[RMDB]
RNA sequence: GGGAACGACUCGAGUAGAGUCGAAAAGCAAGAAAAGCACAGAUGUUGGCUAAACAAUAUAAAACUAAAGGUGGUGGGUAUAGGUAAUGGCACUUGCAAAGUCACAAAGGUCGCUUCGUGCAUGGACUAAACAAAAGUGGAAAACCAAAUCAGGUAACAAAGCUAGUUCUUUCGAGAACUAGCUUUGAAAAGAAACAACAACAACAAC
Reactivity to DMS in 0.01 (KOAc 150mM, MgCl2 10mM, bicine 150mM(pH8.5), 24C), signal-to-noise 2, nucleotides 027 to 156: g020c030a150a280g000a040a010a060a080g010c060a080c010a040g030a110u010g010u010u000g000g030c010u030a090a090a120c030a070a150u010a170u020a070a020a120a090c040u000a070a060a080g000g050u010g030g010u000g010g030g000u000a190u020a020g010g000u010a070a030u010g000g000c000a060c040u010u000g000c050a020a070a160g030u000c070a070c080a080a080a100g010g070u000c080g010c030u000u010c050g010u000g000c020a120u000g020g010a090c040u000a060a110a110c070a080a050a030a060g030u000g000g000a090a050a050a050c020c000a000a040a020u000c120a050g000g010u000a090a200
Reactivity to 2A3 in 0.01 (KOAc 150mM, MgCl2 10mM, bicine 150mM(pH8.5), 24C), signal-to-noise 1, nucleotides 027 to 156: g010c000a080a000g000a020a030a000a000g020c010a000c000a020g050a040u050g010u060u010g040g000c050u110a160a050a000c050a030a080u110a000u110a140a070a020a000c070u080a110a040a020g070g010u030g010g000u050g000g030g020u110a080u010a050g070g000u070a130a080u060g030g000c030a020c030u020u030g050c030a140a000a000g020u110c000a020c070a060a060a000g020g000u040c050g010c120u070u020c020g010u000g010c010a010u050g000g000a010c030u060a110a070a000c070a020a080a000a000g000u080g030g020a000a010a010a010c070c000a000a040a130u120c070a040g140g000u020a070a000

Annotation: Source: RMDB library OK3TST, as collected in RNAgym. Structure probing data (DMS and 2A3) for a 207-nucleotide construct. DMS (dimethyl sulfate) methylates the pairing face of unpaired adenines and cytosines. For DMS, 2,314 sequencing reads were counted. Values cover nucleotides 27 to 156. For DMS the reverse transcriptase was MarathonRT. The reactions ran in a buffer of 150 mM KOAc, 10 mM MgCl2 and 150 mM bicine (pH 8.5), at 24 C. High 2A3 reactivity points to a flexible backbone, as in loops and unpaired stretches.